[RMDB]
RNA sequence: GGGAACGACUCGAGUAGAGUCGAAAAAAUGACGACGACUGAGUAGCACACACAAAGCGGCAUAAACCUUUCAUCCCGCACUCGCUCACAUUUACGCUCUCAGUAUGUACUGCCAACGACAUCGGGAGUACCUCGUACCGUUCGCGGUACGAGGUACAAAAGAAACAACAACAACAAC
Reactivity to 2A3 in 0.01 (KOAc 150mM, MgCl2 10mM, bicine 150mM(pH8.5), 24C), signal-to-noise 1, nucleotides 027 to 126: a000a100u090g040a000c100g000a000c040g050a040c000u020g030a000g020u210a000g010c050a010c020a050c010a000c040a220a060a000g070c030g070g000c020a050u210a100a110a170c020c010u030u220u160c030a020u020c040c000c000g000c030a040c010u100c040g000c020u050c040a070c010a080u090u090u190a040c050g040c000u100c000u010c020a020g000u020a100u060g030u020a040c020u050g070c030c010a040a020c070g100a070c030a050u110c010g020g020g050a050
Reactivity to DMS in 0.01 (KOAc 150mM, MgCl2 10mM, bicine 150mM(pH8.5), 24C), signal-to-noise 1, nucleotides 027 to 126: a000a080u020g010a020c060g000a030c060g000a070c010u010g000a040g010u020a100g030c020a030c110a100c060a060c110a050a040a140g050c150g020g000c190a060u000a060a060a120c060c000u020u080u010c030a180u000c020c000c000g000c140a060c100u000c020g020c010u000c030a000c090a090u010u000u070a170c260g010c060u000c000u000c000a050g040u010a060u000g010u000a020c090u010g040c010c020a040a030c060g000a070c100a040u000c050g010g000g010a100